[RMDB]
RNA sequence: GGGAACGACUCGAGUAGAGUCGAAAAAUAGUGUAAUUGUCCGGAAUCGCAUCAAAAUGCAAACUUGCCUUUCCUUCACUGUCGGUUGUCUUAGCAUAGACCUUAUCCUUAAAGUGGAAGUCGAUAGGACUACCCAUGCAUUCGUGCAUGGGUAGUCAAAAGAAACAACAACAACAAC
Reactivity to 2A3 in 0.01 (KOAc 150mM, MgCl2 10mM, bicine 150mM(pH8.5), 24C), signal-to-noise 2, nucleotides 027 to 126: a010u150a030g150u060g030u070a150a120u080u070g140u090c030c000g040g070a050a040u190c050g010c040a000u040c070a080a070a060a010u130g000c050a000a090a000c050u020u010g020c010c020u000u020u090c020c000u100u050c070a020c050u060g000u050c000g020g030u050u110g010u000c030u060u030a010g020c010a060u090a120g000a020c000c030u090u040a120u110c000c000u090u200a140a140a080g140u170g060g000a000a030g010u060c090g000a010u040a010g050
Reactivity to DMS in 0.01 (KOAc 150mM, MgCl2 10mM, bicine 150mM(pH8.5), 24C), signal-to-noise 1, nucleotides 027 to 126: a030u040a110g010u000g000u020a070a030u000u050g000u010c030c060g000g010a080a050u040c100g020c010a040u000c130a010a070a120a070u000g000c070a060a010a000c170u000u000g000c010c020u000u000u010c020c000u000u000c090a030c070u000g000u030c130g010g070u000u000g000u000c040u010u000a050g040c100a000u000a050g000a020c050c050u000u000a110u000c050c010u030u000a050a010a060g030u070g020g000a090a120g000u000c020g000a100u020a050g020